[RMDB]
RNA sequence: GGGAACGACUCGAGUAGAGUCGAAAACUUUCCUUUCAAUGGGUUGGUAUGAUUUAAUAAGGAUGCAAGAGAAUAGUACGGGAAGUUCGAAGACUUGCGGAUUUGCUUCCACGGCUCCGCGAGUUCAUUAAAUUAUAUGAUUCGUCAUAUAAUUUAAAAAAGAAACAACAACAACAAC
Reactivity to 2A3 in 0.01 (KOAc 150mM, MgCl2 10mM, bicine 150mM(pH8.5), 24C), signal-to-noise 3, nucleotides 027 to 126: c000u020u050u040c000c000u050u130u090c090a080a070u120g070g020g000u060u060g030g030u060a070u060g070a120u050u090u150a130a140u170a120a090g090g010a030u100g020c050a060a030g040a010g020a140a040u070a050g050u070a060c030g030g000g040a020a020g010u000u110c040g070a080a010g050a040c000u000u020g000c000g000g030a040u200u110u210g000c010u120u040c040c040a060c050g000g000c000u000c000c020g000c000g000a000g000u010u010c010a000
Reactivity to DMS in 0.01 (KOAc 150mM, MgCl2 10mM, bicine 150mM(pH8.5), 24C), signal-to-noise 8, nucleotides 027 to 126: c110u010u010u000c010c010u010u030u020c110a090a080u010g010g000g010u000u010g000g000u010a050u010g000a100u000u010u020a060a080u010a080a090g000g000a050u010g010c050a060a080g010a110g000a080a050u010a070g010u000a060c090g000g000g000a060a070g010u000u000c060g000a100a120g010a020c010u000u000g000c000g000g000a080u020u030u020g010c020u010u020c140c160a080c190g000g010c030u000c000c010g000c000g000a010g000u000u010c070a070